An RNA of 177 nucleotides, treated with 2A3 and DMS and read out base by base. The reactions ran in a buffer of 150 mM KOAc, 10 mM MgCl2 and 150 mM bicine (pH 8.5), at 24 C. As a SHAPE reagent, 2A3 marks flexible, mostly unpaired nucleotides at the ribose 2'-OH.
[RMDB]
RNA sequence: GGGAACGACUCGAGUAGAGUCGAAAACAGGAUCCGGCGCCGAUCGUACUGCGUACUAGGCCGUACGGCCUGAUCGAGCGCCAGUCUCGAUCUGGAUCGCGCUCACGUACUGCUCGAUCAUGACGUGAAGGCCCUAAAUGUUCGCAUUUAGGGCCUUAAAAGAAACAACAACAACAAC
Reactivity to 2A3 in 0.01 (KOAc 150mM, MgCl2 10mM, bicine 150mM(pH8.5), 24C), signal-to-noise 1, nucleotides 027 to 126: c040a020g000g110a020u020c030c070g090g020c040g000c040c030g010a070u070c020g010u090a070c040u140g200c020g040u010a070c060u080a050g040g000c000c000g050u140a040c100g060g010c010c040u000g000a010u050c010g000a020g090c060g050c040c040a010g000u040c000u020c060g070a150u000c010u040g060g000a080u030c020g000c020g000c000u080c000a040c070g120u150a060c090u080g030c080u110c020g060a030u060c000a110u110g040a000c040g030u070g050
Reactivity to DMS in 0.01 (KOAc 150mM, MgCl2 10mM, bicine 150mM(pH8.5), 24C), signal-to-noise 2, nucleotides 027 to 126: c090a180g030g000a030u020c040c080g000g020c010g030c010c020g000a050u000c030g030u000a090c110u010g020c110g010u000a070c100u010a110g010g060c030c050g000u000a060c130g010g010c010c020u000g000a010u000c030g020a080g010c020g020c120c070a030g020u010c030u000c070g000a090u000c020u000g020g000a070u000c050g030c130g000c050u000c070a080c120g000u010a090c110u000g000c040u030c010g000a050u000c030a130u010g010a060c040g000u000g000